[RMDB]
RNA sequence: GGGAACGACUCGAGUAGAGUCGAAAAGCAGUAGUGUUCGCACUACUGCAAAUAAAAAGAGGUGCUAGGUACACCCUCUAUAAGCAAAGAUCGAAAGAUCAAAAACAUGCUACUUCGGUAGCAUGAACUUACUCUGAUUCUUCGGAAUCAGAGUAAGAAAAGAAACAACAACAACAAC
Reactivity to DMS in 0.01 (KOAc 150mM, MgCl2 10mM, bicine 150mM(pH8.5), 24C), signal-to-noise 2, nucleotides 027 to 126: g020c010a010g010u010a000g010u000g040u000u000c160g010c000a010c010u000a020c000u000g000c000a010a020a040u000a030a090a090a110a060g020a050g000g000u000g000c050u010a080g010g020u000a090c100a070c070c020c030u000c000u000a080u040a110a100g000c180a090a080a070g000a010u000c000g000a070a070a080g000a030u010c010a050a090a100a150a270c000a030u000g010c000u000a000c000u000u020c210g010g020u000a000g020c000a000u010g000a020a110
Reactivity to 2A3 in 0.01 (KOAc 150mM, MgCl2 10mM, bicine 150mM(pH8.5), 24C), signal-to-noise 2, nucleotides 027 to 126: g000c010a000g000u020a000g000u000g060u030u130c210g020c080a010c000u010a010c000u000g000c000a000a010a000u000a000a040a010a010a010g010a020g000g010u040g020c060u140a070g060g160u190a050c000a000c050c090c000u000c020u050a220u010a030a050g090c080a210a070a010g000a020u030c000g040a040a010a040g020a000u030c050a100a000a000a000a000c010a000u000g020c000u000a010c000u030u060c260g080g000u000a000g000c000a000u000g000a000a000

An RNA of 177 nucleotides, treated with DMS and 2A3 and read out base by base. Reactivities are given for positions 27 through 126. It was measured as part of the RMDB library M2PK50.